[RMDB]
RNA sequence: GGGAACGACUCGAGUAGAGUCGAAAAGGUCGUCUUUUCGAAGACGACCACUGUCGUUCCCAAAACUUUUCGAAACAUGUCCAAAGACAUGCUGAAACAGAAUUGGUGUGUGUUUCGACACACACAAGAUGUGUAAGUUUUUCGAAACUUACACAUCAAAAGAAACAACAACAACAAC
Reactivity to 2A3 in 0.01 (KOAc 150mM, MgCl2 10mM, bicine 150mM(pH8.5), 24C), signal-to-noise 9, nucleotides 027 to 126: g000g000u000c000g000u000c020u020u060u030u120c210g120a000a000g000a000c000g000a000c000c000a000c010u020g000u000c000g000u000u000c000c000c000a010a010a010a010c020u050u030u030u040c020g050a050a070a040c010a000u010g010u000c040c090a300a080a050g010a000c000a010u010g000c030u070g050a060a050a030c100a070g180a200a170u200u220g110g000u010g000u000g000u000g000u000u050u070c130g010a010c000a000c000a000c000a000c000a000a010
Reactivity to DMS in 0.01 (KOAc 150mM, MgCl2 10mM, bicine 150mM(pH8.5), 24C), signal-to-noise 6, nucleotides 027 to 126: g010g020u000c000g010u000c000u000u000u000u010c160g020a010a010g020a010c000g000a010c000c000a000c070u010g020u000c010g010u000u000c010c000c000a040a040a070a140c080u000u000u000u000c020g000a140a110a120c010a010u000g000u010c010c150a110a140a190g000a010c000a000u000g000c040u010g000a060a040a040c260a070g010a070a080u010u010g000g010u000g010u000g010u010g000u000u000u010c170g000a070c000a010c000a000c000a000c010a060a070